[RMDB]
RNA sequence: GGGAACGACUCGAGUAGAGUCGAAAACAAAAACUAGAUUCAGUCAAGGACAUUUACUUUGGCUACGUUGGUCCAACCGAAUACGGGCUUCUGAUUCCAUGAAGAGCUUUUGCAAUUUAGAGUUUGAACUUAUCUCUGGGUUCGCCCAGAGAUAAGUAAAAGAAACAACAACAACAAC
Reactivity to DMS in 0.01 (KOAc 150mM, MgCl2 10mM, bicine 150mM(pH8.5), 24C), signal-to-noise 2, nucleotides 027 to 126: c070a070a060a080a080a080c080u020a170g020a070u000u010c030a040g020u010c070a040a000g010g000a160c190a110u000u040u020a060c000u000u000u000g020g000c000u000a050c130g000u010u000g010g010u000c030c040a120a080c030c080g010a070a090u030a090c170g000g000g020c080u000u000c000u010g010a110u010u000c010c050a080u050g010a100a060g000a120g030c020u010u000u000u060g040c060a030a090u000u000u000a080g000a180g010u000u000u000g020a080
Reactivity to 2A3 in 0.01 (KOAc 150mM, MgCl2 10mM, bicine 150mM(pH8.5), 24C), signal-to-noise 4, nucleotides 027 to 126: c030a020a060a020a020a000c060u090a030g010a080u120u150c070a000g020u010c010a030a020g010g010a070c050a130u090u160u190a100c140u040u040u040g000g010c000u040a030c050g020u040u070g020g010u020c020c010a050a030c040c050g050a020a020u120a130c040g030g000g000c000u060u050c030u120g090a120u120u060c040c060a100u100g030a020a050g050a010g020c030u070u100u100u090g050c060a050a030u060u140u100a130g010a030g060u020u040u050g030a040

Notes: The record gives the reactivity of an RNA of 177 nucleotides to DMS and 2A3. It was measured as part of the RMDB libraries RFM100 and RFMREP. DMS adducts were read by reverse transcription with MarathonRT.